Source: RMDB library OK1LIB, as collected in RNAgym. This 177-nucleotide RNA was probed chemically with DMS and 2A3. Reactivities are rounded to 0.1 and cut off at 0 and 3. Reactivities are given for positions 27 through 126. For 2A3, 3,245 sequencing reads were counted.
RNA sequence: GGGAACGACUCGAGUAGAGUCGAAAAUAACCUUUUGGGAACAGGCAAGGAACAACCUUAUUGAAAAGCCUUACUUUUGCAACCAAAUGACAAUGAAAUAAAUAAGGUUGUCCGUAAGGUUACGUGCAUACCCCAGAAGAUUCGUCUUCUGGGGUAUAAAAGAAACAACAACAACAAC
Reactivity to DMS in 0.01 (KOAc 150mM, MgCl2 10mM, bicine 150mM(pH8.5), 24C), signal-to-noise 5, nucleotides 027 to 126: u020a050a080c030c000u000u010u030u010g020g020g020a110a080c130a050g000g010c100a070a080g010g010a110a070c000a020a010c020c000u000u000a050u010u020g010a060a110a120a100g000c100c070u020u000a100c050u010u010u010u010g000c180a140a160c240c110a030a060a050u000g010a090c180a040a020u030g010a060a050a060u020a060a030a030u010a020a020g000g000u000u000g000u000c070c040g030u030a030a010g000g020u010u000a010c100g000u020g040c220
Reactivity to 2A3 in 0.01 (KOAc 150mM, MgCl2 10mM, bicine 150mM(pH8.5), 24C), signal-to-noise 5, nucleotides 027 to 126: u040a020a030c020c000u060u000u060u140g120g030g040a110a110c080a130g110g040c050a030a070g070g050a070a050c010a000a020c000c010u040u020a040u030u130g080a090a080a030a060g000c010c020u050u050a070c050u060u170u140u170g010c010a070a130c010c040a080a080a110u110g070a110c080a070a050u220g160a110a060a130u220a050a140a020u070a030a010g000g000u000u030g010u000c000c010g030u090a020a020g000g000u030u000a060c100g090u070g000c010